Record summary:
Structure probing data (2A3 and DMS) for a 177-nucleotide construct. 2A3 adducts were read by reverse transcription with SuperScript II with manganese. Values cover nucleotides 27 to 126.

RNA sequence: GGGAACGACUCGAGUAGAGUCGAAAAGGUAGCAGAGAAGAGACUAGGCUUCAGACUAGAUAGUAUCACACUACGGGUACAUAGUAGAGACAUACAUAGAUGUGUAUGACACAUCAGAGCUGCCAUGCGUAUGGUGACUCUUCGGAGUCACCAUACGAAAAGAAACAACAACAACAAC
Reactivity to 2A3 in 0.01 (KOAc 150mM, MgCl2 10mM, bicine 150mM(pH8.5), 24C), signal-to-noise 2, nucleotides 027 to 126: g010g010u010a010g000c050a020g110a000g010a270a020g050a000g020a110c050u050a060g050g070c010u090u060c080a050g020a110c010u010a000g010a060u120a050g030u010a040u090c000a050c050a050c250u100a030c070g090g030g030u110a090c040a070u100a030g040u000a010g020a010g030a040c000a040u070a020c030a010u120a050g080a120u030g010u000g010u000a150u230g070a050c010a000c000a050u040c030a040g030a000g060c020u020g000c010c010a020u100g080
Reactivity to DMS in 0.01 (KOAc 150mM, MgCl2 10mM, bicine 150mM(pH8.5), 24C), signal-to-noise 3, nucleotides 027 to 126: g050g040u000a010g050c010a120g030a150g030a110a090g010a170g020a080c070u000a030g000g010c040u000u000c110a140g020a070c030u000a040g000a120u000a120g010u010a040u000c070a140c110a200c060u000a060c090g000g030g010u000a070c220a090u010a060g020u020a030g020a090g000a170c170a020u000a060c050a080u010a090g000a020u000g010u000g030u000a060u000g000a150c030a000c020a020u000c010a080g000a150g010c010u030g000c020c030a110u000g000